RNA sequence: GGGAACGACUCGAGUAGAGUCGAAAACACAUUCUAUUCGUAGAAUGUGGAACGAAGAGAGAUCGACAGCGUCGCAGCUAUGUCGAACGAGGAAGAGCGCGCAGGGAUCGGGCUUCGGCCCGAUCAAAUCUAUUAUAGUGUUCGCACUAUAAUAGAUAAAAGAAACAACAACAACAAC
Reactivity to DMS in 0.01 (KOAc 150mM, MgCl2 10mM, bicine 150mM(pH8.5), 24C), signal-to-noise 9, nucleotides 027 to 126: c000a010c010a000u000u000c000u000a020u000u010c170g010u000a000g000a010a000u000g010u000g000g010a080a100c100g010a080a070g000a140g000a130g010a100u000c010g000a030c030a050g000c030g010u000c260g010c160a140g000c020u000a060u010g010u000c010g000a020a100c080g000a090g000g000a050a040g000a040g010c030g020c060g010c130a090g010g010g000a010u000c000g010g000g010c000u000u010c210g020g000c000c000c000g000a010u000c020a030a050
Reactivity to 2A3 in 0.01 (KOAc 150mM, MgCl2 10mM, bicine 150mM(pH8.5), 24C), signal-to-noise 5, nucleotides 027 to 126: c000a000c000a000u010u000c000u020a040u040u080c160g090u030a000g010a010a010u000g000u010g000g030a070a030c050g110a150a040g090a010g010a000g000a110u030c020g020a020c020a020g030c020g090u180c100g020c090a070g000c030u100a090u250g040u040c010g020a050a030c030g010a050g030g030a060a050g020a030g040c030g000c010g010c060a040g170g010g000a000u000c000g000g010g010c010u050u080c240g110g010c010c000c000g000a000u010c000a000a030